[RMDB]
Conditions: 150 mM KOAc, 10 mM MgCl2 and 150 mM bicine (pH 8.5), 24 C. This 177-nucleotide RNA was probed chemically with 2A3 and DMS. Reactivities are given for positions 27 through 126. For DMS, 1,898 sequencing reads were counted.
RNA sequence: GGGAACGACUCGAGUAGAGUCGAAAAGAUAUGGACUGUAACGAAUUAUAGACUCCUUGGACCUCGGAAACGAGCUAGGAGCCUAUAACUAUUACAGUCCUAAGUCAAACUAUGCUUCGGCAUAGAACACCAGUAUUACCUUCGGGUAAUACUGGUGAAAAGAAACAACAACAACAAC
Reactivity to 2A3 in 0.01 (KOAc 150mM, MgCl2 10mM, bicine 150mM(pH8.5), 24C), signal-to-noise 2, nucleotides 027 to 126: g040a010u100a050u140g020g010a000c000u010g000u010a030a000c080g020a250a100u010u000a000u010a000g020a030c000u010c010c030u100u110g220g110a300c000c030u010c030g020g060a100a090a060c030g000a000g030c000u010a010g010g030a000g020c000c000u020a010u010a010a000c030u010a000u050u000a000c010a000g000u000c010c000u010a000a010g010u000c010a000a080a070c000u000a000u000g000c000u050u080c290g140g020c010a000u000a010g030a030a010
Reactivity to DMS in 0.01 (KOAc 150mM, MgCl2 10mM, bicine 150mM(pH8.5), 24C), signal-to-noise 3, nucleotides 027 to 126: g020a070u010a300u010g000g040a080c010u000g020u010a000a000c050g010a080a100u000u000a010u020a000g000a040c000u000c000c000u000u010g060g000a160c300c000u010c000g000g010a110a160a110c010g000a030g000c010u000a020g010g010a010g000c000c000u000a000u000a000a010c060u000a230u000u000a030c020a010g000u000c000c020u000a020a040g000u010c010a130a130a220c000u000a000u000g020c000u000u020c170g020g010c000a010u000a000g000a090a220